Chemical mapping of a 177-nucleotide RNA with 2A3 and DMS.
For DMS, 9,020 sequencing reads were counted.
Values are in units of 0.01, from 0 to 300, in steps of 10.
RNA sequence: GGGAACGACUCGAGUAGAGUCGAAAAGUAAUUGGAUUUAGGGCCCACCCUAAAUCUGGGAUGAUCUCAUCUCAAGAUCCUUCACUUAAGUAUGUCUGCAAGGAACCUAUUUCUAAAUAAGAUCCUGCGACUAAAUAGGAUUCGUCCUAUUUAGUCGAAAAGAAACAACAACAACAAC
Reactivity to 2A3 in 0.01 (KOAc 150mM, MgCl2 10mM, bicine 150mM(pH8.5), 24C), signal-to-noise 9, nucleotides 027 to 126: g130u130a030a140u150u140g010g010a000u000u000u000a020g000g010g000c020c040c010a300c030c040c010u010a010a010a000u000c010u010g020g010g000a010u030g060a120u060c170u090c100a070u020c010u010c030a020a020g040a060u020c020c000u080u070c050a100c100u110u080a140a060g080u110a190u210g130u050c080u050g050c050a040a040g020g030a070a070c020c000u020a100u050u110u080c090u110a140a200a180u130a070a050g040a080u030c010c010u040g040
Reactivity to DMS in 0.01 (KOAc 150mM, MgCl2 10mM, bicine 150mM(pH8.5), 24C), signal-to-noise 5, nucleotides 027 to 126: g000u000a090a060u010u030g010g010a020u000u000u010a010g000g010g000c080c060c140a150c040c000c010u000a010a010a010u010c000u010g010g000g010a040u020g010a090u050c170u040c060a040u020c050u010c070a130a050g000a070u010c030c030u000u000c060a090c120u020u020a110a090g040u010a040u020g010u030c050u010g020c090a060a050g000g010a020a100c030c020u000a020u000u000u030c150u020a040a050a040u010a040a050g000a100u010c010c000u000g000